Annotation:
An RNA of 177 nucleotides, treated with DMS and 2A3 and read out base by base. The reactions ran in a buffer of 150 mM KOAc, 10 mM MgCl2 and 150 mM bicine (pH 8.5), at 24 C. Values cover nucleotides 27 to 126. Source: RMDB library TTRDEL, as collected in RNAgym. For DMS, 2,903 sequencing reads were counted.
RNA sequence: GGGAACGACUCGAGUAGAGUCGAAAAGAUAUGGACUUGGACCUCCGAACUACUCUGAGUGAUCGGAAACGAUCAAGAGGAGCGGAGCUAGUCCUAAGUCAAAGACUCAUUGUUCGCAAUGAGUCAAGCUUUGUAGUAGGUUCGCCUACUACAAAGCAAAAGAAACAACAACAACAAC
Reactivity to DMS in 0.01 (KOAc 150mM, MgCl2 10mM, bicine 150mM(pH8.5), 24C), signal-to-noise 3, nucleotides 027 to 126: g010a120u010a100u000g010g020a030c010u000u000g010g000a040c080c000u000c010c000g010a070a060c040u010a190c010u000c000u000g020a300g000u000g000a010u000c020g000g010a120a090a180c010g000a020u010c010a080a030g010a200g000g000a070g000c010g000g000a020g000c190u000a100g000u010c010c010u010a010a020g010u000c020a070a110a110g000a010c000u000c000a000u000u000g000u000u000c250g020c010a020a020u000g000a010g010u000c000a040a060
Reactivity to 2A3 in 0.01 (KOAc 150mM, MgCl2 10mM, bicine 150mM(pH8.5), 24C), signal-to-noise 3, nucleotides 027 to 126: g090a030u260a130u300g080g010a020c020u020u040g020g050a060c010c010u000c020c020g090a200a110c040u170a040c000u120c010u020g250a220g300u140g020a100u010c000g010g010a080a050a050c010g000a000u000c020a030a000g030a010g030g000a000g000c020g000g000a010g000c030u060a010g000u010c000c020u010a040a020g010u000c010a000a200a000g010a000c010u000c010a000u000u040g050u120u110c300g000c140a000a000u000g000a010g010u000c000a000a020